RNA sequence: GGGAACGACUCGAGUAGAGUCGAAAACACAAGGUUCGCCUUGUGAAAAAUCCUAAGUCGUCAACAGCCGUUAGAGAGCUUUGAUCUUAUCGGAAACGAUAAGGGAGCUCGAUUGACGGACAUGACGAUAUGGAAAAAACGUAGGUUCGCCUACGAACUCUAUCCCCACGUUCGCGUGGGGAUAGAGAAAAGAAACAACAACAACAAC
Reactivity to 2A3 in 0.01 (KOAc 150mM, MgCl2 10mM, bicine 150mM(pH8.5), 24C), signal-to-noise 1, nucleotides 027 to 156: c030a000c000a000a000g010g000u040u050c040g080c010c010u000u020g010u020g030a050a000a000a020a000u000c000c000u030a070a040g030u000c000g020u000c010a060a020c030a260g030c010c000g020u070u070a080g000a000g010a000g120c000u300u070u060g070a040u070c000u000u010a010u000c000g020g020a160a020a100c010g000a000u000a000a000g000g020g000a000g000c000u010c010g050a110u040u130g030a020c000g000g020a030c010a110u050g000a000c000g000a020u030a100u130g030g030a010a070a000a070a000a030c000g010u000a000g000g020u030u050c180g120c060c010u030a000c100g020a080a050